Structure probing data (DMS and 2A3) for a 177-nucleotide construct.
Source: RMDB library OK2TST, as collected in RNAgym.
For 2A3 the reverse transcriptase was SuperScript II with manganese.
DMS adducts were read by reverse transcription with MarathonRT.
RNA sequence: GGGAACGACUCGAGUAGAGUCGAAAACACUUUCAAACUAAAAACCAAAAAGCAAUUACAUCACCAAGCCAUAUAUAAUACUCCAUAAGAAAGUGGUGUCGCUUGUUUUAAGGGAGAGGACAGCUUGGUUAAAUAUACUAUUCGUAGUAUAUUUAACAAAAGAAACAACAACAACAAC
Reactivity to DMS in 0.01 (KOAc 150mM, MgCl2 10mM, bicine 150mM(pH8.5), 24C), signal-to-noise 6, nucleotides 027 to 126: c040a100c070u010u010u000c050a080a110a130c090u020a050a060a080a090a090c050c120a040a060a070a070a060g000c040a050a070u000u000a060c040a030u000c070a050c020c020a040a060g010c030c050a040u000a070u000a060u010a060a080u010a100c070u000c030c020a070u000a050a060g010a030a050a050g000u000g010g020u000g020u010c160g020c080u000u000g010u000u000u000u000a070a150g010g010g000a090g010a090g010g010a070c140a070g010c050u000u000g000
Reactivity to 2A3 in 0.01 (KOAc 150mM, MgCl2 10mM, bicine 150mM(pH8.5), 24C), signal-to-noise 3, nucleotides 027 to 126: c020a000c020u110u160u120c120a110a140a050c050u190a040a060a060a050a080c040c030a100a090a040a020a000g020c010a030a060u120u040a080c010a040u060c010a010c030c000a020a010g040c020c020a050u080a010u050a000u010a190a120u050a140c040u040c080c020a040u060a110a050g060a130a080a010g040u010g040g060u050g070u070c060g020c040u020u050g050u040u130u000u050a040a050g040g040g000a040g020a020g040g020a010c020a030g050c040u040u050g020